Overview: The record gives the reactivity of an RNA of 177 nucleotides to 2A3 and DMS. For 2A3, 1,726 sequencing reads were counted.

RNA sequence: GGGAACGACUCGAGUAGAGUCGAAAAUAGAUACACGCACUGUGGAUGAGAUCUUCUUCAUGGUACCCGACAUCCUCGAGAUUCACGAGAAGUUUCUCAGCGACCUGAAGAGCCGUUUGGAUGACUACUACCACUACCGUUUCGACGGUAGUGGUAGAAAAGAAACAACAACAACAAC
Reactivity to 2A3 in 0.01 (KOAc 150mM, MgCl2 10mM, bicine 150mM(pH8.5), 24C), signal-to-noise 2, nucleotides 027 to 126: u090a010g130a030u120a090c000a000c070g100c040a060c090u110g050u040g120g020a100u060g000a030g000a050u030c010u020u000c020u090u040c070a070u160g040g030u100a110c020c000c000g020a030c020a080u040c010c010u010c030g060a090g020a070u090u010c040a020c050g040a030g030a080a030g050u030u040u000c030u030c020a020g020c020g020a020c010c000u040g060a080a030g000a040g060c010c020g010u030u080u080g090g030a090u080g060a060c050u090a020
Reactivity to DMS in 0.01 (KOAc 150mM, MgCl2 10mM, bicine 150mM(pH8.5), 24C), signal-to-noise 3, nucleotides 027 to 126: u000a070g000a150u020a130c070a100c070g010c100a060c060u010g020u010g000g010a120u000g000a090g000a050u000c060u000u000c010u000u000c020a050u020g000g000u010a080c040c040c020g010a060c130a050u000c090c030u000c060g010a060g000a090u000u000c040a070c080g010a050g010a100a160g020u000u000u000c000u000c000a090g000c040g000a060c020c020u000g010a100a140g020a060g040c030c020g000u000u000u000g000g000a080u000g000a110c090u000a120